[RMDB]
RNA sequence: GGGAACGACUCGAGUAGAGUCGAAAACCACCGCAGAUUUGGAUAAUACGGUCAGACAGCGUCGAUUUACCGUGGUCAAUGUGAGCAAUGAUCGAAAAGUUACGUAUGUUCUUCAUAGAGAUAAAUUCGAUCUUCUUCCAUUCGUGGAAGAAGAUCGAAAAGAAACAACAACAACAAC
Reactivity to 2A3 in 0.01 (KOAc 150mM, MgCl2 10mM, bicine 150mM(pH8.5), 24C), signal-to-noise 2, nucleotides 027 to 126: c010c010a000c000c060g050c080a080g020a070u060u090u140g100g010a040u090a210a040u070a180c000g010g000u060c020a050g000a120c010a040g010c050g030u030c010g010a010u040u050u030a070c010c030g070u030g020g000u000c000a040a040u160g040u030g040a020g000c030a000a100u040g000a050u040c050g030a050a030a030a030g040u050u050a000c030g090u120a040u170g020u000u000c000u000u030c060a160u140a100g050a020g060a030u050a130a150a020u030u000
Chemical mapping of a 177-nucleotide RNA with 2A3. For 2A3 the reverse transcriptase was SuperScript II with manganese. The RNA was probed in 150 mM KOAc, 10 mM MgCl2 and 150 mM bicine (pH 8.5) at 24 C. Reactivities are given for positions 27 through 126.